[RMDB]
RNA sequence: GGGAACGACUCGAGUAGAGUCGAAAACAUAUGACGGAGAGUGGAACACUCAGCGGAAACGCAUCCAAUGUCUGAAGUCUUUAAUGGGUAUAACAGUCAGAUGACCCAGAUCCCAACAGACAAUAAAACUGUAAAUCAUAUUCGUAUGAUUUACAGUAAAAGAAACAACAACAACAAC
Reactivity to DMS in 0.01 (KOAc 150mM, MgCl2 10mM, bicine 150mM(pH8.5), 24C), signal-to-noise 9, nucleotides 027 to 126: c070a070u010a050u000g010a070c070g010g010a080g010a050g030u000g000g020a130a160c080a040c030u000c020a160g020c040g000g010a070a060a100c030g020c010a300u000c040c040a100a080u010g000u000c000u000g010a170a160g010u000c030u000u000u000a140a160u010g000g000g010u000a050u000a080a110c090a100g000u000c190a090g010a110u010g000a040c000c000c000a020g000a120u000c010c000c000a080a120c050a010g000a020c020a060a080u010a050a050a070
Reactivity to 2A3 in 0.01 (KOAc 150mM, MgCl2 10mM, bicine 150mM(pH8.5), 24C), signal-to-noise 9, nucleotides 027 to 126: c020a030u160a070u220g050a030c060g030g010a030g000a010g090u060g030g190a190a010c040a010c070u020c030a020g010c010g020g010a040a030a010c010g000c010a010u020c020c020a070a090u070g010u010c000u010g050a070a020g000u000c010u020u050u040a080a050u030g000g000g050u050a090u030a220a100c030a030g150u120c030a040g100a220u140g020a090c010c000c000a010g010a020u020c000c000c000a000a030c000a000g020a000c020a030a050u130a070a080a000
This 177-nucleotide RNA was probed chemically with DMS and 2A3. Conditions: 150 mM KOAc, 10 mM MgCl2 and 150 mM bicine (pH 8.5), 24 C. Values cover nucleotides 27 to 126. For 2A3, 28,752 sequencing reads were counted.